This 207-nucleotide RNA was probed chemically with 2A3. The reactions ran in a buffer of 150 mM KOAc, 10 mM MgCl2 and 150 mM bicine (pH 8.5), at 24 C. Source: RMDB library VIROID, as collected in RNAgym. The 2A3 profile rests on 387 reads. Values cover nucleotides 27 to 156.
RNA sequence: GGGAACGACUCGAGUAGAGUCGAAAAUCUUCCUUGUAUGACAGAAGGGUUAUCAUUAAGAUAACCGCAGGCGCAGGACCUGAAAUCGUGAUGAGGCAUGAACCAUAAGCGAGGAAAGGGAGAAUAACAAGACUAUUUCGUUCUUUUGAACUCGUCAGAACUCAAAUCCGUUCGCGGAUUUGAGUUCAAAAGAAACAACAACAACAAC
Reactivity to 2A3 in 0.01 (KOAc 150mM, MgCl2 10mM, bicine 150mM(pH8.5), 24C), signal-to-noise 1, nucleotides 027 to 156: u040c000u020u050c000c000u010u050g040u030a160u120g000a070c010a040g150a150a050g070g000g000u000u000a000u010c010a050u120u300a130a000g000a020u000a010a010c000c000g050c000a010g040g050c060g000c160a100g110g000a080c000c030u000g050a070a110a000u080c080g010u000g030a110u070g030a040g010g050c110a080u170g030a020a030c030c010a060u010a130a080g020c040g000a010g000g050a000a000a110g000g000g050a030g010a000a060u210a080a050c100a110a030g080a070c050u070a180u090u180u070c170g010u000u010c000u000u000u050u040g020a010a040c000u000c040g130u120c050a050